[RMDB]
RNA sequence: GGGAACGACUCGAGUAGAGUCGAAAAGAUAUGGACCGAACUACAGCCGCCCAGCAACAGCCCACUACAUGGCUCGGAAACGAGCCAUGUAGUGGGACAUGCUGUAACAAGCUGCGGUCCUAAGUCACUUAUAUGGGAGGUUCGCCUCCCAUAUAAGAAAAGAAACAACAACAACAAC
Reactivity to DMS in 0.01 (KOAc 150mM, MgCl2 10mM, bicine 150mM(pH8.5), 24C), signal-to-noise 2, nucleotides 027 to 126: g000a110u000a300u020g000g010a060c010c000g010a130a060c100u000a300c030a010g000c000c070g030c300c300c020a020g010c000a010a110c270a170g000c000c020c000a020c020u010a000c020a010u000g000g030c010u040c020g050g020a060a110a230c020g000a020g030c010c020a000u000g020u010a000g050u000g000g000g010a010c020a020u000g030c000u010g000u000a040a140c220a210a080g000c000u010g020c020g000g000u000c000c010u010a010a130g000u000c000a240
Chemical mapping of a 177-nucleotide RNA with DMS. The RNA was probed in 150 mM KOAc, 10 mM MgCl2 and 150 mM bicine (pH 8.5) at 24 C. DMS adducts were read by reverse transcription with MarathonRT. The data come from the RNA Mapping Database (RMDB), library TTRINS.